[RMDB]
RNA sequence: GGGAACGACUCGAGUAGAGUCGAAAAUUAUUUUUCAUGGACAUCCUCGCUCCAAGGAGUAGAAAGUAAACAGGGAUGUACAUGUCGAAGGUAGGGAGGAAGACUCCAAGGUGAACUACUCAGACGGAAGCGUACUCGACGAUAAGGCACCGGACGAGUAAUAUCCCACUUUCGAGUGGGAUAUUACAAAAGAAACAACAACAACAAC
Reactivity to 2A3 in 0.01 (KOAc 150mM, MgCl2 10mM, bicine 150mM(pH8.5), 24C), signal-to-noise 3, nucleotides 027 to 156: u080u020a120u080u080u030u060u060c020a010u000g020g000a000c000a000u010c010c020u040c050g000c000u000c000c020a080a090g110g040a000g020u100a090g120a150a100a060g130u210a130a120a060c100a110g010g000g040a000u010g010u010a020c000a010u000g070u060c060g040a060a030g110g020u160a040g020g060g000a020g000g030a060a070g010a050c010u000c030c040a020a020g030g000u040g010a080a030c030u060a010c020u050c030a010g020a060c030g060g010a100a060g050c030g020u050a120c000u020c070g080a050c020g020a050u050a120a080g000g010c010a000c030c060g000g050a000c020g000a010
Reactivity to DMS in 0.01 (KOAc 150mM, MgCl2 10mM, bicine 150mM(pH8.5), 24C), signal-to-noise 2, nucleotides 027 to 156: u000u000a110u020u030u000u000u020c020a040u000g000g000a030c000a030u010c020c020u020c050g050c050u010c020c040a070a160g010g000a170g060u010a090g020a050a110a220g020u010a070a080a090c090a120g000g020g000a080u000g040u000a020c010a040u000g020u000c060g000a080a110g030g010u010a110g050g010g010a050g000g000a090a090g000a090c030u020c040c010a070a070g000g030u020g020a160a160c020u000a040c010u010c050a110g010a100c070g000g010a080a080g020c050g030u000a060c040u000c020g020a080c050g030a090u010a020a120g010g000c020a120c020c000g000g010a190c060g020a210
This 207-nucleotide RNA was probed chemically with 2A3 and DMS. For DMS the reverse transcriptase was MarathonRT. It was measured as part of the RMDB library OK3TST. The reactions ran in a buffer of 150 mM KOAc, 10 mM MgCl2 and 150 mM bicine (pH 8.5), at 24 C. 2A3 adducts were read by reverse transcription with SuperScript II with manganese. In probing experiments dimethyl sulfate is read out at A N1 and C N3, which are open when not base-paired.